[RMDB]
RNA sequence: GGGAACGACUCGAGUAGAGUCGAAAACACUGGCGCCGCGGCAGCCGACACGAUCGUGUUGCCCUACAACGACAUCGAUGCCGUACAGCAGACCUUCGCCCGGUUCGGCGAGCAGAUCGCCGCCGUACGGUGUACACCAUUUCGAUGGUGUACACCGAAAAGAAACAACAACAACAAC
Reactivity to 2A3 in 0.01 (KOAc 150mM, MgCl2 10mM, bicine 150mM(pH8.5), 24C), signal-to-noise 3, nucleotides 027 to 126: c060a010c060u050g070g010c030g000c050c050g020c000g030g000c030a010g070c100c000g000a010c090a020c120g100a280u040c030g010u020g020u110u070g020c000c000c000u050a040c020a150a040c030g070a000c010a050u020c040g060a060u070g010c000c010g030u050a060c030a020g010c000a010g030a170c010c000u070u080c090g060c000c020c000g030g000u080u070c030g010g000c020g010a050g000c070a060g010a190u070c040g010c010c010g000c000c000g020u000a020
Reactivity to DMS in 0.01 (KOAc 150mM, MgCl2 10mM, bicine 150mM(pH8.5), 24C), signal-to-noise 3, nucleotides 027 to 126: c100a060c080u000g040g010c040g040c080c070g010c090g000g030c030a050g010c100c030g000a040c120a100c180g000a110u000c050g010u000g010u000u010g010c030c020c060u010a140c100a070a040c020g000a060c080a070u000c040g000a090u000g000c000c030g000u000a080c110a080g010c080a070g000a120c040c010u000u010c080g000c040c030c060g030g000u010u010c070g000g010c010g010a040g000c130a060g030a080u010c050g010c000c030g020c020c030g000u000a100
Source information:
This 177-nucleotide RNA was probed chemically with 2A3 and DMS. It was measured as part of the RMDB library OK2TRN. For DMS the reverse transcriptase was MarathonRT. The reactions ran in a buffer of 150 mM KOAc, 10 mM MgCl2 and 150 mM bicine (pH 8.5), at 24 C. For 2A3, 4,813 sequencing reads were counted.